[RMDB]
RNA sequence: GGGAACGACUCGAGUAGAGUCGAAAAAGGAAUGGAGACGGGGGGAAAUCGACCGGGUCCCGCAGAACCCGAUGGAGUCCCCCGCCAUCCCCUGACGGAGAAAACUGGUCCCGAUAGGGGCACCCACAAGCCGCCGAGUUCGCUCGGCGGAAAAGAAACAACAACAACAAC
Reactivity to DMS in 0.01 (KOAc 150mM, MgCl2 10mM, bicine 150mM(pH8.5), 24C), signal-to-noise 3, nucleotides 027 to 129: a000g030g010a000a000u050g190g000a050g050a000c090g030g010g020g040g060g010a010a090a070u040c020g000a020c090c020g010g000g000u060c090c050c180g020c240a130g010a100a000c000c000c010g030a000u020g140g000a060g010u050c000c000c000c000c000g000c050c010a000u000c010c030c010c000u010g000a090c260g000g000a090g020a070a060a080a130c200u030g030g030u030c030c010c000g030a170u070a100g000g000g010g080c280a060c040c000c000a040c140a130a000g000
Reactivity to 2A3 in 0.01 (KOAc 150mM, MgCl2 10mM, bicine 150mM(pH8.5), 24C), signal-to-noise 2, nucleotides 027 to 129: a000g100g030a100a000u120g030g000a020g000a030c030g000g000g000g000g000g020a000a040a060u070c000g040a030c030c000g010g040g000u040c080c050c030g090c020a010g060a040a010c000c000c000g000a010u010g080g000a000g040u060c000c010c000c000c000g000c000c000a050u020c000c000c000c000u000g030a000c000g040g020a090g080a100a140a000a030c090u060g120g030u020c000c000c000g030a090u180a160g010g000g000g000c010a040c010c020c020a030c040a010a010g060

Source: RMDB library 15KLIB, as collected in RNAgym. This 170-nucleotide RNA was probed chemically with DMS and 2A3. DMS adducts were read by reverse transcription with MarathonRT. For 2A3, 3,117 sequencing reads were counted. Reactivities are given for positions 27 through 129. The RNA was probed in 150 mM KOAc, 10 mM MgCl2 and 150 mM bicine (pH 8.5) at 24 C.